An RNA of 177 nucleotides, treated with DMS and 2A3 and read out base by base. The DMS profile rests on 41,725 reads. Reactivities are given for positions 27 through 126.
RNA sequence: GGGAACGACUCGAGUAGAGUCGAAAACGACAGCGCAAACGUUCCUUGAAUGGAGAGAGAGAUCAUCCCAGGAACGUUUGAUAGACGCUCCUCUAUCGAGCGUCCACUGUUCUAUUCAAGGAUAUACGAUCAUGUUGUAUUUCGAUAUGACAUGAUCAAAAGAAACAACAACAACAAC
Reactivity to DMS in 0.01 (KOAc 150mM, MgCl2 10mM, bicine 150mM(pH8.5), 24C), signal-to-noise 9, nucleotides 027 to 126: c200g000a040c040a020g020c180g020c010a010a020a020c020g010u000u000c000c000u010u020g030a120a060u030g010g010a030g010a110g010a070g000a170g010a140u020c040a180u000c010c010c050a030g010g000a010a000c000g010u000u000u000g000a090u020a070g010a040c010g010c010u010c020c150u020c170u040a080u030c300g000a010g010c010g010u000c000c040a060c040u000g000u010u000c060u010a100u030u030c090a080a080g010g000a090u030a080u030a070c170
Reactivity to 2A3 in 0.01 (KOAc 150mM, MgCl2 10mM, bicine 150mM(pH8.5), 24C), signal-to-noise 9, nucleotides 027 to 126: c040g040a010c020a030g040c040g010c090a010a010a010c010g010u010u000c000c000u030u080g100a110a080u090g060g000a110g010a010g010a010g010a010g010a140u090c020a040u000c030c010c000a000g000g000a010a000c000g000u000u000u010g010a010u050a010g020a000c010g010c010u030c020c020u170c070u110a180u210c080g000a000g000c000g000u010c010c000a050c010u050g040u100u020c030u070a130u070u130c060a090a050g110g020a070u070a020u040a220c110

About this RNA:
The RNA was probed in 150 mM KOAc, 10 mM MgCl2 and 150 mM bicine (pH 8.5) at 24 C.